Background:
The record gives the reactivity of an RNA of 177 nucleotides to 2A3 and DMS. Reactivities are given for positions 27 through 126.
RNA sequence: GGGAACGACUCGAGUAGAGUCGAAAAUCACCGUUCCAGAACAAAGGCAAAGCGCAGCUGGAAGUGAAAAUAGGCGAAACCAAUGGUCGUCUGGAAGGCGAUCGUGACAAAGUGCGUUUUGUACAGACCUCUUCGUGCGAUUCGUCGCACGAAGAGGAAAAGAAACAACAACAACAAC
Reactivity to 2A3 in 0.01 (KOAc 150mM, MgCl2 10mM, bicine 150mM(pH8.5), 24C), signal-to-noise 2, nucleotides 027 to 126: u020c000a020c060c010g080u040u050c010c000a040g000a160a070c060a110a130a020g090g000c010a000a000a000g030c010g000c000a060g060c000u030g000g010a090a040g020u040g200a080a080a060a080u200a070g070g000c060g040a030a020a010c040c030a050a030u090g020g000u010c010g000u010c010u100g120g210a110a080g020g000c000g000a000u030c000g060u010g000a000c100a050a040a000g040u000g020c000g000u000u020u030u000g000u070a150c020a020g070a120
Reactivity to DMS in 0.01 (KOAc 150mM, MgCl2 10mM, bicine 150mM(pH8.5), 24C), signal-to-noise 1, nucleotides 027 to 126: u000c040a040c020c140g040u000u000c000c000a080g030a210a180c250a050a060a110g000g000c000a000a000a010g020c000g000c000a070g000c000u000g000g030a050a120g010u020g000a000a030a110a100u020a050g010g100c050g000a130a020a210c090c040a160a000u000g000g000u000c010g000u040c000u000g000g000a040a070g000g000c000g000a000u000c010g050u000g000a110c220a060a120a070g000u000g020c020g000u000u000u010u030g020u010a100c150a200g000a230
Record summary
The RNA was probed in 150 mM KOAc, 10 mM MgCl2 and 150 mM bicine (pH 8.5) at 24 C. Source: RMDB library OK2TST, as collected in RNAgym.